Annotation:
Chemical mapping of a 177-nucleotide RNA with DMS and 2A3. DMS adducts were read by reverse transcription with MarathonRT. Values cover nucleotides 27 to 126.
[RMDB]
RNA sequence: GGGAACGACUCGAGUAGAGUCGAAAAGAAAGAAGGCGCUCGCGCAAUAUAUCGCGCAGCACGGAUUAACGUGCACCGCCAGCGCGUUAUAUGAAAAGAGCGCGUGGGGGCGGACCUGCGCCGAAAAGGGUAUACUUUACUUCGGUAAAGUAUACCCAAAAGAAACAACAACAACAAC
Reactivity to DMS in 0.01 (KOAc 150mM, MgCl2 10mM, bicine 150mM(pH8.5), 24C), signal-to-noise 3, nucleotides 027 to 126: g010a150a100a130g000a110a260g010g000c030g000c010u010c140g020c030g030c030a110a060u030a080u030a070u030c060g000c000g020c020a120g010c030a000c000g000g000a190u030u030a100a110c020g030u000g000c000a210c000c030g010c020c020a240g000c000g000c020g010u000u000a030u000a050u020g010a130a090a190a130g000a050g000c000g010c030g000u000g000g060g000g000g020c000g010g010a200c170c100u020g010c000g010c000c040g010a030a030a140a080
Reactivity to 2A3 in 0.01 (KOAc 150mM, MgCl2 10mM, bicine 150mM(pH8.5), 24C), signal-to-noise 2, nucleotides 027 to 126: g020a000a140a000g090a040a030g030g000c020g000c000u090c050g010c000g050c000a040a000u210a020u070a090u290c050g010c000g030c000a030g000c010a000c000g050g050a140u300u190a110a060c010g000u000g010c000a010c030c030g060c010c020a030g010c000g010c000g000u010u010a150u060a060u260g120a110a080a020a080g070a010g010c000g000c020g010u010g000g090g080g000g050c000g000g000a020c010c010u060g000c010g000c000c000g000a010a010a000a030